Source information: Conditions: 150 mM KOAc, 10 mM MgCl2 and 150 mM bicine (pH 8.5), 24 C. Structure probing data (DMS and 2A3) for a 177-nucleotide construct.
RNA sequence: GGGAACGACUCGAGUAGAGUCGAAAAUUUAUAUCCAUCGUUUCUUAGAGCCGUAAUUGUGCUGAUAUCAAUACCAGGGAAGGACACACAGCAAACAUUUGCUGGAUCCACGUCACACCCGUGGCGAGCUUUAUUGGAACUUCGGUUCCAAUAAAGCAAAAGAAACAACAACAACAAC
Reactivity to DMS in 0.01 (KOAc 150mM, MgCl2 10mM, bicine 150mM(pH8.5), 24C), signal-to-noise 1, nucleotides 027 to 126: u010u000u000a160u000a090u010c040c040a160u000c110g000u000u000u000c000u000u010a120g020a180g050c000c060g000u010a100a040u000u000g010u000g000c070u010g000a000u000a110u000c150a070a150u000a070c060c070a110g000g000g010a100a110g000g010a050c110a010c090a290c050a020g010c010a040a050a230c210a100u000u000u000g020c000u000g020g000a130u000c070c050a120c090g000u000c000a100c130a120c010c160c260g020u000g000g000c070g010a110
Reactivity to 2A3 in 0.01 (KOAc 150mM, MgCl2 10mM, bicine 150mM(pH8.5), 24C), signal-to-noise 1, nucleotides 027 to 126: u030u240u040a170u020a030u040c030c030a030u040c080g000u000u000u090c010u040u050a090g000a040g150c040c020g030u090a140a050u090u070g030u030g070c080u060g050a100u110a040u150c040a060a030u040a120c000c040a050g050g030g030a190a000g100g010a000c020a030c000a000c020a090g000c010a080a050a080c050a180u120u050u000g010c010u000g020g000a030u000c060c050a160c040g010u000c010a020c030a030c040c050c080g040u000g000g050c000g000a040
As a SHAPE reagent, 2A3 marks flexible, mostly unpaired nucleotides at the ribose 2'-OH. The 2A3 profile rests on 666 reads. For DMS the reverse transcriptase was MarathonRT.